[RMDB]
RNA sequence: GGGAACGACUCGAGUAGAGUCGAAAAUGGUGUUAAGUGGAAUAAGUGGUUGAAUAUACAUAUAUGUACAGGGGGCUACAUAUAUGUAUAUGCCCCCUCGCGUCAGUAUAAGUAGGUAUAAGGUGGAAUACUCACCACCAUUCGUGGUGGUGAGUAUAAAAGAAACAACAACAACAAC
Reactivity to 2A3 in 0.01 (KOAc 150mM, MgCl2 10mM, bicine 150mM(pH8.5), 24C), signal-to-noise 2, nucleotides 027 to 126: u040g020g000u080g070u120u080a120a060g060u090g100g020a050a030u070a100a080g050u080g050g020u020u080g100a210a020u040a000u000a020c010a010u000a000u020a000u010g000u000a010c070a080g000g000g040g080g010c030u000a000c010a000u050a030u010a030u040g010u000a020u000a000u020g030c020c000c000c010c000u000c000g020c000g010u050c030a020g030u040a070u010a180a070g080u050a000g030g080u080a070u010a090a070g090g000u030g020g000a000
Reactivity to DMS in 0.01 (KOAc 150mM, MgCl2 10mM, bicine 150mM(pH8.5), 24C), signal-to-noise 2, nucleotides 027 to 126: u040g000g020u010g000u000u010a020a090g020u010g000g000a120a080u020a100a100g020u000g010g010u030u000g000a050a050u010a040u010a000c010a020u000a010u000a010u000g020u000a030c160a090g010g000g000g000g000c200u000a030c030a000u000a010u000a020u010g010u000a000u000a020u000g000c060c010c030c010c030u000c050g000c050g010u000c030a040g000u010a040u030a060a120g030u020a060g000g020u000a070u010a020a100g020g010u000g010g010a100